[RMDB]
RNA sequence: GGGAACGACUCGAGUAGAGUCGAAAAGCGCCAGCCGCGUUCGAGCCGCAGCGCGUUCAUCGCCUGCGCGGCCUUCUGCGGCAGCGAGCGCUGGCCCGAGCGGCGCGGCGUGUCGCUCAGCAGGCCAGUGAUUAAUUAGCUUCGGCUAAUUAAUCACAAAAGAAACAACAACAACAAC
Reactivity to DMS in 0.01 (KOAc 150mM, MgCl2 10mM, bicine 150mM(pH8.5), 24C), signal-to-noise 9, nucleotides 027 to 126: g020c030g010c010c030a140g010c010c010g020c010g010u000u000c090g010a190g020c030c010g020c020a070g000c080g000c010g010u000u010c230a150u010c020g020c020c030u010g010c030g000c020g010g000c020c030u000u000c030u010g020c020g010g010c000a050g010c100g000a130g010c010g010c000u000g010g010c000c010c060g000a020g010c020g020g000c010g010c050g020g010c160g020u000g020u000c010g010c000u000c010a080g030c130a110g020g010c020c040a100
Reactivity to 2A3 in 0.01 (KOAc 150mM, MgCl2 10mM, bicine 150mM(pH8.5), 24C), signal-to-noise 7, nucleotides 027 to 126: g010c000g010c000c020a040g010c010c000g000c010g010u040u050c080g030a050g010c000c000g010c020a030g010c020g000c010g040u100u150c140a260u300c030g010c010c040u150g010c070g000c010g020g000c010c010u040u010c040u120g000c000g020g000c010a000g050c070g020a060g000c020g000c030u040g000g000c010c010c000g010a010g000c010g010g000c020g000c040g190g050c140g040u060g010u000c000g000c000u010c000a020g040c060a010g020g000c010c010a010
An RNA of 177 nucleotides, treated with DMS and 2A3 and read out base by base. The reactions ran in a buffer of 150 mM KOAc, 10 mM MgCl2 and 150 mM bicine (pH 8.5), at 24 C. For DMS the reverse transcriptase was MarathonRT.